[RMDB]
This 177-nucleotide RNA was probed chemically with 2A3 and DMS. The DMS profile rests on 4,902 reads. DMS adducts were read by reverse transcription with MarathonRT. Reactivities are rounded to 0.1 and cut off at 0 and 3. 2A3 adducts were read by reverse transcription with SuperScript II with manganese. 2A3 is a SHAPE reagent: it acylates the 2'-hydroxyl of flexible nucleotides of all four kinds. It was measured as part of the RMDB library RFM100.

RNA sequence: GGGAACGACUCGAGUAGAGUCGAAAAGAAACUUGAAGGCAUUGACGGAGGGGUACCACCAGACGUGGAGUCUGCGGCUCAAUCUGACUCAACGCGCGCACCUCACCAGGCCCGGACGCGCGGAGGAUUAAGUGGCCUAGUUCGCUAGGCCACUUAAAAAAGAAACAACAACAACAAC
Reactivity to 2A3 in 0.01 (KOAc 150mM, MgCl2 10mM, bicine 150mM(pH8.5), 24C), signal-to-noise 2, nucleotides 027 to 126: g050a000a040a010c100u060u060g080a090a020g070g000c050a140u040u120g020a070c040g050g000a010g020g030g010g060u050a080c000c020a030c000c020a010g020a050c010g050u120g020g030a010g020u010c010u010g020c030g060g000c010u020c030a070a110u020c020u040g010a020c010u000c020a040a090c000g000c000g000c010g000c010a100c030c000u010c000a020c030c040a020g050g010c070c020c000g030g030a000c040g010c000g000c000g060g000a020g010g000a020
Reactivity to DMS in 0.01 (KOAc 150mM, MgCl2 10mM, bicine 150mM(pH8.5), 24C), signal-to-noise 3, nucleotides 027 to 126: g040a060a040a120c080u010u040g010a080a120g000g000c060a040u020u000g000a110c030g000g000a060g020g010g000g000u000a090c070c050a100c110c070a040g000a060c040g020u020g020g000a110g010u010c010u010g000c110g000g000c020u020c100a040a130u000c050u030g000a060c070u000c050a100a150c050g000c030g010c030g050c050a060c010c020u010c090a090c120c050a100g000g000c030c060c090g010g010a150c030g020c010g000c030g000g000a080g000g000a170